[RMDB]
RNA sequence: GGGAACGACUCGAGUAGAGUCGAAAAUCGUAAACUCCAGGCCCCACUUCUGUCUGGAAGUUCUUAGCCUUGAGCUCAUCCAGGAUUUCCAAGUUAGAGCGGCUAGCUUCAAAGGAAAUCACGUCCGACUGCUGAAAAUCUUCGGAUUUUCAGCAGUAAAAGAAACAACAACAACAAC
Reactivity to 2A3 in 0.01 (KOAc 150mM, MgCl2 10mM, bicine 150mM(pH8.5), 24C), signal-to-noise 3, nucleotides 027 to 126: u100c000g030u080a000a050a080c010u030c030c010a010g020g000c000c010c010c000a040c010u020u030c000u050g300u140c040u170g030g000a040a000g010u000u110c040u110u180a030g000c020c000u010u060g010a000g000c060u060c000a070u070c000c000a040g040g030a030u000u020u000c010c000a040a000g060u080u090a050g040a080g130c020g130g090c110u040a020g010c000u070u070c100a120a080a000g030g000a000a000a030u010c010a050c040g040u040c040c000g040
Reactivity to DMS in 0.01 (KOAc 150mM, MgCl2 10mM, bicine 150mM(pH8.5), 24C), signal-to-noise 1, nucleotides 027 to 126: u010c160g000u010a020a110a100c080u000c020c010a050g000g000c000c000c210c180a170c010u000u020c070u000g010u040c050u000g000g000a080a020g020u000u000c110u040u000a180g000c010c000u000u010g040a110g000c020u000c240a040u030c140c080a100g010g000a000u000u000u050c030c060a000a100g000u040u000a110g000a080g000c030g000g000c200u020a010g000c010u000u000c200a130a080a060g000g000a020a000a000u000c010a200c070g000u030c070c090g030